[RMDB]
RNA sequence: GGGAACGACUCGAGUAGAGUCGAAAAUUGCUGGUUGCGACCAUUUGCCGUGCUUAUCAUGAGAAAAAGGGCAAUGCUAUCACUGCCAAGUGGCUUGUCCCAGUGACAAAAUUUCGCGUGCGUGAGCAUCUCGUGAGCGAUUCGUCGCUCACGAGAUAAAAGAAACAACAACAACAAC
Reactivity to 2A3 in 0.01 (KOAc 150mM, MgCl2 10mM, bicine 150mM(pH8.5), 24C), signal-to-noise 1, nucleotides 027 to 126: u030u050g000c010u020g000g140u090u050g010c020g020a020c000c040a010u000u000u160g010c010c010g000u050g000c030u030u090a090u140c060a070u100g020a010g070a160a090a040a040a080g060g000g060c020a010a030u080g000c030u050a070u240c010a020c030u110g000c030c010a030a080g000u050g000g000c020u010u020g000u040c000c000c010a040g050u010g070a030c120a020a110a060a020u000u110u020c030g020c030g070u060g030c050g030u050g050a000g030c000
Reactivity to DMS in 0.01 (KOAc 150mM, MgCl2 10mM, bicine 150mM(pH8.5), 24C), signal-to-noise 2, nucleotides 027 to 126: u010u010g010c010u000g030g010u000u010g000c040g030a110c040c090a070u000u020u010g030c030c050g030u000g010c010u010u000a040u000c110a070u010g000a170g000a050a040a020a120a120g050g030g000c040a030a040u010g060c070u000a100u000c080a020c020u010g000c060c070a090a100g030u000g010g010c010u000u010g000u000c050c010c030a060g030u000g000a060c230a030a050a090a100u000u000u000c020g020c100g030u000g010c090g020u000g000a090g020c050